[RMDB]
This 177-nucleotide RNA was probed chemically with DMS and 2A3. The reactions ran in a buffer of 150 mM KOAc, 10 mM MgCl2 and 150 mM bicine (pH 8.5), at 24 C. Values cover nucleotides 27 to 126. For 2A3 the reverse transcriptase was SuperScript II with manganese. The data come from the RNA Mapping Database (RMDB), library OK2TST.
RNA sequence: GGGAACGACUCGAGUAGAGUCGAAAAUGGGGCGUAGCCGGUGGGUUAUUUAAUGAAUCCUGCCUUGCCCCGCUAAGGUGGUAUGCAUGGCUGACGUGAACAAGCAGGCCGCAAAGGCCGCAAAGAACGUAUUGCCUCUAUUCGUAGAGGCAAUACGAAAAGAAACAACAACAACAAC
Reactivity to DMS in 0.01 (KOAc 150mM, MgCl2 10mM, bicine 150mM(pH8.5), 24C), signal-to-noise 5, nucleotides 027 to 126: u010g020g000g000g000c010g030u010a100g040c130c300g020g050u000g010g020g010u000u000a030u010u000u020a100a100u010g000a050a020u010c010c010u000g020c030c040u010u010g010c000c020c000c000g000c080u000a060a070g000g030u000g000g000u010a070u010g020c050a080u000g010g010c030u010g020a080c090g010u000g020a080a070c120a080a090g020c020a100g030g000c010c000g000c130a050a070a190g010g010c010c010g010c060a080a080a070g010a100a140
Reactivity to 2A3 in 0.01 (KOAc 150mM, MgCl2 10mM, bicine 150mM(pH8.5), 24C), signal-to-noise 3, nucleotides 027 to 126: u080g000g000g000g010c060g010u060a010g150c090c060g030g000u020g020g010g000u060u080a150u060u280u120a260a120u230g080a010a030u040c000c000u000g010c000c010u010u100g000c000c010c000c010g000c000u040a050a030g050g030u040g020g050u070a050u070g020c080a060u080g030g000c010u010g010a030c020g050u040g050a070a030c020a010a020g000c050a050g010g040c010c000g020c020a140a140a040g040g000c010c030g010c030a040a060a000g060a090a010